[RMDB]
Conditions: 150 mM KOAc, 10 mM MgCl2 and 150 mM bicine (pH 8.5), 24 C.
Structure probing data (2A3) for a 177-nucleotide construct.
RNA sequence: GGGAACGACUCGAGUAGAGUCGAAAAGGCGCUGCCCCUGCCGGAGUUCCUGGACCUGAAGCGGGGGCCCAACUACAAAAUCAGCUCGGCAUCCUCAACGGCUUACUCGGACCGACUGGAGGGCGAGGUCGGCGGAGUAUUUCGAUACUCCGCCGACAAAAGAAACAACAACAACAAC
Reactivity to 2A3 in 0.01 (KOAc 150mM, MgCl2 10mM, bicine 150mM(pH8.5), 24C), signal-to-noise 1, nucleotides 027 to 126: g080g050c030g000c160u110g000c040c000c000c000u040g000c010c040g000g000a050g000u000u040c000c150u140g020g060a050c000c140u030g050a100a000g060c050g000g000g000g000g000c010c000c000a010a010c010u150a050c040a030a160a060a150u120c010a000g000c000u020c010g000g000c010a020u060c060c020u070c040a070a060c000g050g000c000u080u040a000c040u020c080g000g100a110c040c010g110a110c070u100g000g000a040g000g020g000c050g000a000g020